Chemical mapping of a 177-nucleotide RNA with DMS and 2A3. Values cover nucleotides 27 to 126. The 2A3 profile rests on 4,344 reads. The DMS profile rests on 3,068 reads. Conditions: 150 mM KOAc, 10 mM MgCl2 and 150 mM bicine (pH 8.5), 24 C. High DMS reactivity at an A or C suggests that its Watson-Crick edge is free. For 2A3 the reverse transcriptase was SuperScript II with manganese. Reactivities are rounded to 0.1 and cut off at 0 and 3.
RNA sequence: GGGAACGACUCGAGUAGAGUCGAAAACGCGUCCUGUUCGCAGGACGCGAAUUAAGGAAACCUUCCUGGUGGGGAGAAUAAAUGAGCACUCGCGCUCAUAAAAUAGGUGGGCGUUCGCGCCCACCAAGUCCUAACUCUAUUUCGAUAGAGUUAGGACAAAAGAAACAACAACAACAAC
Reactivity to DMS in 0.01 (KOAc 150mM, MgCl2 10mM, bicine 150mM(pH8.5), 24C), signal-to-noise 3, nucleotides 027 to 126: c010g010c030g010u000c000c000u010g030u000u020c200g020c000a030g010g010a030c000g010c000g010a010a000u000u000a100a060g010g020a060a120a140c070c050u000u000c030c000u000g010g020u000g020g000g000g010a140g000a090a080u010a040a140a030u000g000a020g020c000a140c230u010c270g010c180g010c000u000c010a000u000a040a040a080a120u000a070g020g030u000g010g010g000c000g020u000u000c190g010c020g020c000c000c000a000c010c010a010a050
Reactivity to 2A3 in 0.01 (KOAc 150mM, MgCl2 10mM, bicine 150mM(pH8.5), 24C), signal-to-noise 4, nucleotides 027 to 126: c010g000c010g000u010c000c010u010g020u040u060c300g010c060a010g000g010a000c010g000c000g000a010a000u090u040a050a000g060g040a070a090a050c010c020u050u030c010c000u110g100g090u170g040g020g040g030a050g050a090a080u120a120a150a020u060g010a010g000c000a030c110u170c100g100c060g000c030u010c010a010u040a020a100a010a030u170a070g020g000u020g020g020g000c030g020u030u060c160g010c000g010c030c010c000a000c000c000a000a000